[RMDB]
RNA sequence: GGGAACGACUCGAGUAGAGUCGAAAAGCACGUCCGGUAAGGCCCGUGCGAACACUUGAGCUCCGGCUUGUCCGCUCUUGUGGAUUAGGACGUUCUAGCUCCGGCUUGGCCGCUAGUUCGUCCGAAACAGUAGGCACCUGUUCGCAGGUGCCUACUGAAAAGAAACAACAACAACAAC
Reactivity to 2A3 in 0.01 (KOAc 150mM, MgCl2 10mM, bicine 150mM(pH8.5), 24C), signal-to-noise 3, nucleotides 027 to 126: g000c000a000c010g030u030c000c000g000g160u280a100a040g070g000c030c100c000g000u000g010c000g000a040a030c040a010c010u010u020g000a000g040c050u060c120c050g020g030c060u130u180g050u090c020c050g000c000u000c000u020u010g010u030g040g030a080u090u210a030g000g000a000c000g010u020u010c000u010a010g000c010u050c070c050g140g010c090u140u260g180g030c030c030g000c010u000a000g000u000u000c000g000u000c020c000g000a000a000a000
Reactivity to DMS in 0.01 (KOAc 150mM, MgCl2 10mM, bicine 150mM(pH8.5), 24C), signal-to-noise 1, nucleotides 027 to 126: g020c010a060c030g000u030c000c000g050g050u010a150a020g000g010c260c280c000g010u000g040c060g000a040a120c040a030c040u000u000g000a080g050c090u000c150c110g020g030c010u010u000g020u010c080c020g000c000u000c040u000u010g000u000g000g020a190u020u060a080g000g000a010c050g000u000u000c000u000a000g000c070u000c140c050g010g000c050u020u010g000g000c100c020g000c020u000a020g010u000u000c000g010u000c000c000g050a070a070a180